RNA sequence: GGGAACGACUCGAGUAGAGUCGAAAAGACACAGCAGCCCGUCUCCCGGUAGGUCUUGAUGAGCUGGGCGGUGAGGGGUGGGUUCCCGAAGUGGAGGUCGUCGGGGUAGGCCACCACGAAGGGCUCGUGAGUCUAGAACUUUCGAGUUCUAGACUCAAAAAGAAACAACAACAACAAC
Reactivity to DMS in 0.01 (KOAc 150mM, MgCl2 10mM, bicine 150mM(pH8.5), 24C), signal-to-noise 2, nucleotides 027 to 126: g010a080c080a070c110a080g020c080a090g000c020c010c020g000u010c060u000c020c050c010g010g010u010a060g020g010u000c020u010u000g020a070u000g000a070g010c020u000g000g010g010c140g000g010u010g010a060g000g000g000g000u010g000g010g000u010u000c010c000c000g020a130a240g010u000g000g010a060g010g010u010c010g000u010c130g020g000g000g060u000a130g000g000c000c000a060c010c000a000c010g000a120a280g000g010g000c230u000c100g010
Reactivity to 2A3 in 0.01 (KOAc 150mM, MgCl2 10mM, bicine 150mM(pH8.5), 24C), signal-to-noise 2, nucleotides 027 to 126: g010a000c020a000c030a150g100c020a010g000c000c020c020g030u020c030u040c020c010c010g030g060u070a060g030g040u000c010u050u150g090a130u070g010a030g020c020u070g040g170g140c210g010g010u220g160a130g060g000g050g260u240g000g000g000u110u060c000c000c000g000a080a030g000u030g020g020a010g000g010u010c020g020u040c070g070g000g000g030u000a010g000g020c000c000a010c010c000a000c000g000a040a000g040g030g000c010u040c030g080

Structure probing data (DMS and 2A3) for a 177-nucleotide construct.
For 2A3, 2,797 sequencing reads were counted.
The reactions ran in a buffer of 150 mM KOAc, 10 mM MgCl2 and 150 mM bicine (pH 8.5), at 24 C.
DMS adducts were read by reverse transcription with MarathonRT.
For 2A3 the reverse transcriptase was SuperScript II with manganese.
It was measured as part of the RMDB library OK2TRN.